[RMDB]
RNA sequence: GGGAACGACUCGAGUAGAGUCGAAAAGCCUAACAGUUCGCUGUUAGGCAAAUGCACAGACUUCGCAACUCUGAAAAACACAACAGAAGUGUCUAUGCGAGGAUCGUUGCGUCUUCGGACGCAACAAUAUGGUGAUUUCUUUCGAGAAAUCACCAUAAAAAGAAACAACAACAACAAC
Reactivity to 2A3 in 0.01 (KOAc 150mM, MgCl2 10mM, bicine 150mM(pH8.5), 24C), signal-to-noise 3, nucleotides 027 to 126: g010c010c000u000a000a000c010a010g050u090u090c130g050c100u000g010u010u000a000g000g000c010a030a030a000u060g000c000a040c010a090g100a060c020u020u030c030g000c020a020a060c020u050c030u080g070a140a040a010a090a020c120a020c040a250a000c020a100g120a260a030g120u030g040u100c070u150a110u050g000c000g000a010g000g040a150u130c060g010u000u020g020c010g000u000c000u020u020c110g140g000a000c000g000c000a000a000c000a000a010
Reactivity to DMS in 0.01 (KOAc 150mM, MgCl2 10mM, bicine 150mM(pH8.5), 24C), signal-to-noise 2, nucleotides 027 to 126: g010c010c000u000a000a000c010a000g020u000u000c140g010c020u020g000u000u010a010g010g030c000a000a020a020u000g010c080a040c130a050g000a070c010u000u000c130g000c070a110a100c100u000c020u000g020a040a070a060a090a040c210a070c160a070a110c070a060g010a060a070g010u000g000u000c060u000a070u000g000c010g010a080g000g000a080u000c130g010u010u000g000c000g010u000c000u000u000c180g030g000a000c010g010c000a010a000c010a040a120
An RNA of 177 nucleotides, treated with 2A3 and DMS and read out base by base. Reactivities are given for positions 27 through 126. For 2A3, 3,114 sequencing reads were counted. Conditions: 150 mM KOAc, 10 mM MgCl2 and 150 mM bicine (pH 8.5), 24 C. For 2A3 the reverse transcriptase was SuperScript II with manganese.